[RMDB]
RNA sequence: GGGAACGACUCGAGUAGAGUCGAAAAAGCUGAAGCUGCCAGCAUGAUCUGAUCUUUUGCGAUCUCUUUUUUUAUCUGAAUAAGUUGAUGGAAAUAUUGGGUUCCUAAGAUUCAGAUCGUGCUGCGCGAUUUAGCGAGGUUUCGACCUCGCUAAAUCAAAAGAAACAACAACAACAAC
Reactivity to 2A3 in 0.01 (KOAc 150mM, MgCl2 10mM, bicine 150mM(pH8.5), 24C), signal-to-noise 8, nucleotides 027 to 126: a000g090c080u130g030a140a020g010c030u050g010c040c010a000g000c000a010u000g000a000u000c000u000g000a000u000c010u020u080u100u070g100c150g020a020u000c000u010c000u000u000u010u020u000u020u040a030u000c010u020g150a210a110u260a300a190g140u220u100g030a000u020g010g070a020a010a010u150a070u100u150g000g000g000u010u000c000c000u000a010a000g000a000u180u160c000a000g000a000u000c000g000u000g000c000u000g000c010g000c000
Reactivity to DMS in 0.01 (KOAc 150mM, MgCl2 10mM, bicine 150mM(pH8.5), 24C), signal-to-noise 2, nucleotides 027 to 126: a070g010c030u010g010a100a090g020c050u010g040c010c020a000g020c000a010u000g000a000u000c000u020g000a010u000c000u000u000u020u010g000c200g000a010u010c000u000c010u000u000u000u000u000u000u000a020u020c000u010g030a100a110u070a120a140g050u030u010g000a030u000g000g000a010a010a010u030a030u010u010g010g010g000u000u000c000c010u000a010a000g000a010u010u000c000a010g000a020u000c000g060u000g020c000u000g000c150g000c000